[RMDB]
RNA sequence: GGGAACGACUCGAGUAGAGUCGAAAAGAUAUGGAAUCCCAGAGCGACGAUCGAUAGGUCGGAAACGACCUGAUCGGGAGCUCCUGGGAUUCCUAAGUCAAAAGUCGAGAACUUCGGUUCUCGACAACGACGAUUAAUUGUUCGCAAUUAAUCGUCGAAAAGAAACAACAACAACAAC
Reactivity to 2A3 in 0.01 (KOAc 150mM, MgCl2 10mM, bicine 150mM(pH8.5), 24C), signal-to-noise 1, nucleotides 027 to 126: g010a010u040a010u070g000g010a010a020u010c050c010c000a000g010a010g010c000g300a300c030g000a010u020c000g050a070u100a100g000g000u000c010g020g000a040a050a010c010g020a000c000c000u070g000a010u020c010g000g030g040a030g000c000u050c050c000u000g000g020g000a000u000u000c000c000u000a000a000g020u000c000a000a000a070a270g000u010c020g010a020g010a030a020c000u140u160c300g210g000u010u000c010u000c000g020a000c000a000a000
Reactivity to DMS in 0.01 (KOAc 150mM, MgCl2 10mM, bicine 150mM(pH8.5), 24C), signal-to-noise 2, nucleotides 027 to 126: g010a040u000a300u000g020g000a010a000u000c000c000c000a000g000a030g000c000g010a180c150g010a030u000c010g010a080u000a010g000g030u000c010g000g000a050a050a110c010g000a020c000c010u000g000a010u000c000g000g010g020a210g000c000u010c130c060u000g000g000g020a000u000u000c000c000u000a010a100g010u000c030a140a130a160a150g000u000c000g000a030g010a020a010c020u000u010c240g040g010u000u000c000u000c000g000a000c000a010a060
This 177-nucleotide RNA was probed chemically with 2A3 and DMS. DMS adducts were read by reverse transcription with MarathonRT. In probing experiments dimethyl sulfate is read out at A N1 and C N3, which are open when not base-paired. Reactivities are given for positions 27 through 126. It was measured as part of the RMDB library TTRDES. Conditions: 150 mM KOAc, 10 mM MgCl2 and 150 mM bicine (pH 8.5), 24 C. For DMS, 2,878 sequencing reads were counted. 2A3 adducts were read by reverse transcription with SuperScript II with manganese.